The data come from the RNA Mapping Database (RMDB), libraries RFM100 and RFMREP. An RNA of 177 nucleotides, treated with 2A3 and DMS and read out base by base. For 2A3 the reverse transcriptase was SuperScript II with manganese. DMS adducts were read by reverse transcription with MarathonRT.

RNA sequence: GGGAACGACUCGAGUAGAGUCGAAAACGAGGAUCAUUUUUUUGAACUGAAUCAUGCUCUUUUUAAGUGCUUUGAAACCCUCGAUGAAUGUGUCAAUGUGCAAAGAUAAACCAUUGUUCUCUGUUGAGUAUGUGGCGAAAUUCGUUUCGCCACAUACAAAAGAAACAACAACAACAAC
Reactivity to 2A3 in 0.01 (KOAc 150mM, MgCl2 10mM, bicine 150mM(pH8.5), 24C), signal-to-noise 4, nucleotides 027 to 126: c050g020a030g040g030a040u080c100a120u090u070u050u040u070u110u270g070a050a050c030u040g010a030a030u060c040a070u070g000c010u000c000u050u100u020u030u040a080a000g010u030g050c000u030u040u140g080a050a030a010c010c000c010u010c010g030a060u080g070a040a030u090g160u020g020u040c020a010a060u010g030u040g040c040a060a130a040g040a070u060a020a170a030c000c020a000u020u020g000u080u040c040u010c040u050g070u060u010g000a020
Reactivity to DMS in 0.01 (KOAc 150mM, MgCl2 10mM, bicine 150mM(pH8.5), 24C), signal-to-noise 2, nucleotides 027 to 126: c050g010a050g000g010a140u010c020a040u000u000u010u030u030u010u000g000a050a080c150u000g000a080a160u000c060a000u000g020c020u000c010u010u000u030u000u000a050a000g000u010g030c020u020u010u010g010a020a100a120c040c030c030u000c000g020a110u000g000a050a080u010g020u010g020u000c020a040a040u000g030u010g010c160a030a140a080g000a030u000a080a070a050c030c000a030u000u040g000u000u000c130u050c060u040g000u000u010g010a150